This 177-nucleotide RNA was probed chemically with DMS. Source: RMDB library M2PK90, as collected in RNAgym. The DMS profile rests on 548 reads.

RNA sequence: GGGAACGACUCGAGUAGAGUCGAAAACACAGGCGACUUAAUCGGAGAGCGGUUACACGCGAGGAAGAUGAAAUUAUUACAUCAGUAGACUCGAGAUUACUACAAGUUGCGUUGCUAUCUCAAAUAAAUUACGACUCCAGUUCGCUGGAGUCGUAAUAAAAGAAACAACAACAACAAC
Reactivity to DMS in 0.01 (KOAc 150mM, MgCl2 10mM, bicine 150mM(pH8.5), 24C), signal-to-noise 1, nucleotides 027 to 126: c140a090c130a040g000g020c010g010a040c020u000u000a110a010u020c050g000g020a210g020a140g000c010g030g010u000u000a130c160a140c050g000c050g000a070g000g190a130a140g000a010u000g000a100a120a070u000u000a130u010u000a110c010a000u010c070a050g000u000a130g000a120c050u030c000g020a050g010a070u000u000a040c070u010a080c150a000a100g020u000u000g000c030g000u010u000g010c100u000a090u010c010u020c000a110a090a090u010a010a120